[RMDB]
RNA sequence: GGGAACGACUCGAGUAGAGUCGAAAAGUGUUUCUAAUUUGUUGAUAUUUUCCAUGUACUUGAAACAUGUAUGGUAUACCUCUUAUUUUUCCUUCUCUGAACAAUGGGUAGAAGAAAAGCUCUACUUGUUACUGUCAUUUACUGUGAGCCGUUACUAGUACGUAAUGGACUUCGGUCCAUUACGUACAAAAGAAACAACAACAACAAC
Reactivity to 2A3 in 0.01 (KOAc 150mM, MgCl2 10mM, bicine 150mM(pH8.5), 24C), signal-to-noise 1, nucleotides 027 to 156: g040u010g040u010u050u030c100u040a150a290u150u050u140g050u050u010g040a030u030a070u160u090u080u020c080c000a030u070g040u020a160c030u110u180g080a190a140a000c000a010u030g040u080a060u020g000g040u020a040u020a030c000c000u000c030u080u080a100u050u080u020u000u010c060c000u060u030c070u000c000u010g090a040a030c010a170a110u100g040g000g000u010a040g020a020a000g030a020a150a010a000g030c000u010c020u050a060c030u030u020g020u180u090a030c010u020g060u120c010a020u100u030u000a060c010u040g070u010g060a010g040c030c010g000u040u000a080c050u040a030

An RNA of 207 nucleotides, treated with 2A3 and read out base by base. For 2A3 the reverse transcriptase was SuperScript II with manganese.